[RMDB]
RNA sequence: GGGAACGACUCGAGUAGAGUCGAAAAUAAUGCUAAAACACCCAGCUUUGAGAUCCUGAGUCAAUAUAUUGCCACUUUCUUUUUGGUAGCUUGAGCUUCAUAGUGUCAACUGACCUUGUGUAUCCAUUUUUAAUACAGUCUCUUCCUGUAGCAUGGGACAAGUUCCAUAAUUCGUUAUGGAACUUGUAAAAGAAACAACAACAACAAC
Reactivity to 2A3 in 0.01 (KOAc 150mM, MgCl2 10mM, bicine 150mM(pH8.5), 24C), signal-to-noise 9, nucleotides 027 to 156: u120a000a060u090g010c030u080a060a040a060a030c040a070c010c010c010a030g020c040u110u090u090g040a070g010a040u050c020c020u040g020a030g060u040c040a100a010u070a030u050a060u230u090g030c020c010a060c040u070u120u100c040u080u230u100u090u060g070g010u040a030g000c030u060u100g050a020g020c000u050u060c040a080u060a120g030u030g030u080c030a060a050c070u060g040a040c000c010u060u060g040u020g020u090a040u030c010c010a070u040u070u040u060u200a100a080u150a050c030a020g050u020c010u010c000u130u060c020c010u050g030u060a020g030c060a060u050g020g000g010
Reactivity to DMS in 0.01 (KOAc 150mM, MgCl2 10mM, bicine 150mM(pH8.5), 24C), signal-to-noise 4, nucleotides 027 to 156: u010a090a070u000g020c030u000a070a080a110a110c060a080c020c010c020a140g010c050u010u000u010g010a140g010a060u000c030c000u000g010a110g000u000c030a070a120u010a120u000a100u000u000g000c010c020a100c050u000u000u000c030u010u000u010u000u000g020g010u000a080g000c030u000u000g020a210g020c010u000u000c060a080u000a060g030u000g020u000c030a050a060c050u000g010a040c020c030u000u000g010u010g010u010a080u000c040c040a130u010u000u020u000u000a040a080u000a060c040a060g000u000c030u000c030u000u000c060c030u000g030u000a060g030c060a080u000g020g030g010